RNA sequence: GGGAACGACUCGAGUAGAGUCGAAAAGAUAUGGAUCCGGAAGCUCGCAGGAGAGGAUCUCUCGAAUCGGAAACGAUUCGAGAGAUCUCCCCACCUCCUGAACUACGAGAUAACGGAUCCUAAGUCACUCGUUAAGAUGGUUCGCCAUCUUAACGAGAAAAGAAACAACAACAACAAC
Reactivity to DMS in 0.01 (KOAc 150mM, MgCl2 10mM, bicine 150mM(pH8.5), 24C), signal-to-noise 1, nucleotides 027 to 126: g000a050u000a300u010g000g000a010u000c000c000g070g000a300a300g000c010u000c000g000c000a040g000g010a020g010a120g020g010a010u000c000u000c010u040c000g020a010a000u000c020g000g020a130a190a300c000g000a000u000u000c010g010a000g000a050g000a000u000c000u000c070c000c000c000a300c110c000u010c000c000u000g000a100a040c200u000a290c050g000a020g000a010u000a070a290c000g000g010a000u000c000c000u030a000a090g010u010c040a270